[RMDB]
RNA sequence: GGGAACGACUCGAGUAGAGUCGAAAAAUUUCUACAAGAAAAGAAGAUGGUACAUCCACAUCAGCAAGAGUUCAUAGAUUAGUAGCAGAAGCGUAUAUACCAAACCCAUACAAUAAACCUGUUGUAAAUCAUAAGAAUGGGAUUAAAGAUGAUAAUAUCAUAAUAUCAAGUUCGCUUGAUAUUAUGAAAAAGAAACAACAACAACAAC
Reactivity to DMS in 0.01 (KOAc 150mM, MgCl2 10mM, bicine 150mM(pH8.5), 24C), signal-to-noise 2, nucleotides 027 to 156: a130u010u010u000c020u010a190c080a120a150g010a170a090a070a090g010a070a110g060a090u000g020g020u000a090c030a110u000c020c010a000c030a060u010c050a100g010c030a030a120g010a140g020u020u000c070a090u010a100g030a100u000u010a100g020u010a150g030c050a040g030a060a100g030c040g000u000a050u000a120u000a060c030c050a000a110a090c020c020c010a100u000a090c060a060a060u010a000a090a060c060c050u000g010u020u000g000u010a100a040a110u000c010a020u000a060a120g020a090a060u010g000g000g010a180u000u010a060a060a110g020a100u000g000a070u010a060a080u000a120
Reactivity to 2A3 in 0.01 (KOAc 150mM, MgCl2 10mM, bicine 150mM(pH8.5), 24C), signal-to-noise 2, nucleotides 027 to 156: a000u060u040u000c010u060a090c010a070a110g040a060a050a000a010g040a020a000g000a010u040g000g050u070a050c030a050u030c010c050a030c000a090u050c000a000g040c020a060a040g010a020g090u080u020c020a060u030a040g040a040u100u040a000g090u030a020g020c060a010g020a110a020g040c030g060u030a060u000a010u040a130c060c000a010a050a030c050c010c010a010u090a100c020a040a100u110a120a090a060c030c050u010g000u000u000g020u010a070a100a060u110c040a030u050a100a000g050a090a050u080g010g010g000a010u050u140a100a060a050g030a020u070g000a000u050a210a030u120a070